Source: RMDB library 15KLIB, as collected in RNAgym. Structure probing data (DMS and 2A3) for a 170-nucleotide construct. For DMS the reverse transcriptase was MarathonRT. For DMS, 115,558 sequencing reads were counted. Conditions: 150 mM KOAc, 10 mM MgCl2 and 150 mM bicine (pH 8.5), 24 C. Values are in units of 0.01, from 0 to 300, in steps of 10.
RNA sequence: GGGAACGACUCGAGUAGAGUCGAAAAAAUAGGAUGGCAGGAGGGGACUGCGGGUCCGUCGUUCCAUCCUUUUCUUACCUUGUGGCCGGCAUGGCCCCAGCCUCCUCGCUGGCGCCGGCUGGGCAACUCAGCUUAAGGUUCGCCUUAAGCAAAAGAAACAACAACAACAAC
Reactivity to DMS in 0.01 (KOAc 150mM, MgCl2 10mM, bicine 150mM(pH8.5), 24C), signal-to-noise 7, nucleotides 027 to 129: a020a030u010a000g030g000a040u000g000g020c140a080g000g000a040g010g020g030g020a020c000u000g000c180g010g040g030u000c010c030g020u020c030g020u000u020c000c000a010u020c000c030u000u000u000u000c000u010u030a100c140c110u000u020g000u030g010g000c030c010g000g000c000a070u050g030g000c020c060c000c000a020g010c010c090u060c110c070u010c240g020c000u000g000g000c300g000c000c050g000g000c020u010g040g000g000c010a040a070c050u010c150a130
Reactivity to 2A3 in 0.01 (KOAc 150mM, MgCl2 10mM, bicine 150mM(pH8.5), 24C), signal-to-noise 9, nucleotides 027 to 129: a010a000u090a000g000g000a010u010g010g020c040a030g040g090a040g040g180g000g010a010c010u050g050c180g150g100g010u000c010c010g090u010c020g180u060u020c000c010a010u010c010c000u000u010u010u000c010u020u050a080c010c020u050u110g060u070g080g040c000c000g010g000c070a230u200g030g000c010c010c000c000a000g000c000c010u160c020c020u070c070g000c000u010g000g000c000g000c000c000g000g020c000u050g010g010g030c010a040a070c050u040c120a040